[RMDB]
RNA sequence: GGGAACGACUCGAGUAGAGUCGAAAAGAUCCAGGCUCUGGGGAAGAGAUGGUUGAUAGCUCCCCAGGUCUGUACCAUCCUCCUUGCUGGAACAGGGCAGGCUCCUGAGUGAUAGGGCAGGCGCCUGUGAGAUAACAGGGUUCGCCCUGUUAUCUCAAAAAGAAACAACAACAACAAC
Reactivity to 2A3 in 0.01 (KOAc 150mM, MgCl2 10mM, bicine 150mM(pH8.5), 24C), signal-to-noise 2, nucleotides 027 to 126: g040a020u010c010c000a000g030g000c010u090c020u300g010g010g020g030a150a030g060a030g010a110u190g110g180u150u210g160a100u130a100g050c010u020c000c000c000c000a000g010g000u000c010u010g010u030a030c020c010a030u040c000c020u060c010c000u020u100g040c050u130g060g060a120a060c040a050g000g030g000c020a000g010g010c010u020c010c000u030g030a060g030u190g080a210u140a220g200g100g000c000a000g020g000c030g000c000c000u020g000
Reactivity to DMS in 0.01 (KOAc 150mM, MgCl2 10mM, bicine 150mM(pH8.5), 24C), signal-to-noise 2, nucleotides 027 to 126: g010a060u000c040c000a030g000g000c000u020c020u000g000g000g000g000a120a060g010a110g010a110u000g010g000u010u000g020a130u000a140g010c040u000c000c010c010c010a030g010g010u000c010u000g010u000a010c040c020a080u000c010c020u000c030c030u000u000g020c090u010g020g010a100a120c040a050g000g010g000c020a020g000g000c030u000c000c010u010g000a080g000u010g010a160u010a090g010g000g020c010a040g000g010c100g010c000c000u010g010